[RMDB]
RNA sequence: GGGAACGACUCGAGUAGAGUCGAAAAGAUAUGGACUGUUUCGGGAGCUCCUACUCGGAAACGAGUAGAGCGAAGAACGAAAUGCAGUCCUAAGUCAAAGUAUAAGCAGGUUCGCCUGCUUAUACAACCCAGUGUAAAUCUUCGGAUUUACACUGGGAAAAGAAACAACAACAACAAC
Reactivity to DMS in 0.01 (KOAc 150mM, MgCl2 10mM, bicine 150mM(pH8.5), 24C), signal-to-noise 2, nucleotides 027 to 126: g000a040u000a170u010g000g000a020c020u000g030u000u000u000c000g030g000g070a130g010c010u000c200c100u000a000c000u000c000g010g000a030a060a070c000g010a010g000u000a010g000a040g020c000g000a080a180g030a110a300c010g010a020a020a090u010g010c180a030g030u000c000c000u000a010a080g000u000c000a140a090a160g010u000a000u000a000a000g000c000a000g010g000u000u010c300g030c000c000u000g010c000u010u010a000u000a000c000a110a160
Reactivity to 2A3 in 0.01 (KOAc 150mM, MgCl2 10mM, bicine 150mM(pH8.5), 24C), signal-to-noise 1, nucleotides 027 to 126: g010a000u030a010u090g020g000a010c020u020g030u110u060u020c010g010g050g130a110g000c000u110c050c050u000a010c000u000c010g000g040a040a030a020c010g000a000g000u020a000g010a000g040c040g030a050a020g100a050a030c000g020a020a000a010u260g040c020a040g000u000c000c000u030a030a000g020u030c050a060a170a050g000u000a010u000a000a000g000c000a000g000g070u060u220c260g190c050c000u000g000c000u010u000a000u000a000c000a010a000